[RMDB]
RNA sequence: GGGAACGACUCGAGUAGAGUCGAAAAAUGGCGAACGCAUGGGGAACUACAUCUGUGUCGCGAGUUCGAUUCUCGCCAGGGCCUGGUCCUGUAGCUCAGUUGGUAGAGCAAGCUGUUCCCCGGACACAAAAUCCAGCUAGGUUCGCCUAGCUGGAAAGAUUUAUACUCGCUUCGGCGAGUAUAAAUCAAAAGAAACAACAACAACAAC
Reactivity to 2A3 in 0.01 (KOAc 150mM, MgCl2 10mM, bicine 150mM(pH8.5), 24C), signal-to-noise 2, nucleotides 027 to 156: a000u070g060g000c010g030a090a010c030g060c110a080u080g000g000g000g020a020a020c020u120a030c100a150u160c030u020g120u050g040u120c010g000c000g010a000g000u000u010c020g000a000u020u010c010u000c000g000c000c000a000g010g020g000c070c260u180g090g060u040c000c000u000g000u010a020g020c000u000c010a050g040u170u100g150g070u180a010g020a020g010c020a000a020g040c050u020g020u010u000c010c000c000c000g000g000a020c010a000c040a060a150a000a050u040c000c000a000g000c000u010a000g010g010u050u050c040g010c000c000u000a000g000c000u000g010g000a000a000a000
Reactivity to DMS in 0.01 (KOAc 150mM, MgCl2 10mM, bicine 150mM(pH8.5), 24C), signal-to-noise 2, nucleotides 027 to 156: a120u020g020g010c050g010a090a050c100g020c020a080u000g000g020g010g020a070a090c020u000a110c070a060u000c030u000g050u010g030u010c040g010c020g020a040g000u020u010c030g000a300u000u000c010u000c000g000c020c010a080g040g010g000c040c100u020g020g000u010c000c010u000g000u000a080g010c010u000c000a090g000u010u000g000g000u010a060g000a050g030c030a160a210g010c040u000g010u000u000c010c000c020c030g000g000a120c100a100c060a060a070a070a100u000c030c010a010g010c000u010a020g000g040u010u000c300g020c010c000u010a000g010c000u000g000g010a000a000a050
Chemical mapping of a 207-nucleotide RNA with 2A3 and DMS. For DMS the reverse transcriptase was MarathonRT. 2A3 adducts were read by reverse transcription with SuperScript II with manganese.